[RMDB]
RNA sequence: GGGAACGACUCGAGUAGAGUCGAAAAGCCUUCUUCGGAAGGCAAAAAACCGUAGGAAAUGAGAGAUCAUCGAUCACACGUAACAUCUGCUUCGAAAGAGGCAGUGGUGUGGGAGAUUGGUAUUUCCUAAACGGAAAAAGUGACGUUCGCGUCACAACACACGACUGUUGUUCGCAACAGUCGUGUGAAAAGAAACAACAACAACAAC
Reactivity to 2A3 in 0.01 (KOAc 150mM, MgCl2 10mM, bicine 150mM(pH8.5), 24C), signal-to-noise 1, nucleotides 027 to 156: g030c000c000u040u000c040u020u040c040g190g020a020a030g020g000c000a000a000a060a000a000a030c010c030g050u060a020g000g000a020a000a000u140g040a280g060a030g030a230u200c010a040u080c040g000a000u070c040a000c010a010c020g080u120a160a020c050a210u080c020u000g000c000u010u000c000g060a090a050a050g030a000g000g000c020a000g000u010g000g000u010g000u030g000g000g000a030g040a000u010u050g000g030u050a050u000u000u000c000c000u050a110a040a100c060g030g190a110a170a000a050a030g010u000g020a000c020g000u000u100c270g060c000g120u000c000a000c000a000a000
Reactivity to DMS in 0.01 (KOAc 150mM, MgCl2 10mM, bicine 150mM(pH8.5), 24C), signal-to-noise 1, nucleotides 027 to 156: g000c000c000u000u000c000u000u000c300g110g000a030a000g010g000c020a000a050a070a020a050a040c000c000g100u000a010g020g000a010a010a000u000g000a190g010a300g000a070u000c100a100u000c020g000a300u000c040a000c020a020c000g020u000a040a060c000a080u000c000u000g010c000u010u000c000g020a260a060a140g000a000g000g020c000a060g010u080g060g000u000g020u000g000g000g060a300g030a060u000u010g040g000u010a040u000u000u000c000c060u000a020a050a110c010g000g000a090a010a090a060a150g000u000g010a000c020g010u000u020c300g000c170g020u000c000a000c000a050a250
Structure probing data (2A3 and DMS) for a 207-nucleotide construct.
The reactions ran in a buffer of 150 mM KOAc, 10 mM MgCl2 and 150 mM bicine (pH 8.5), at 24 C.
It was measured as part of the RMDB library RNAMAK.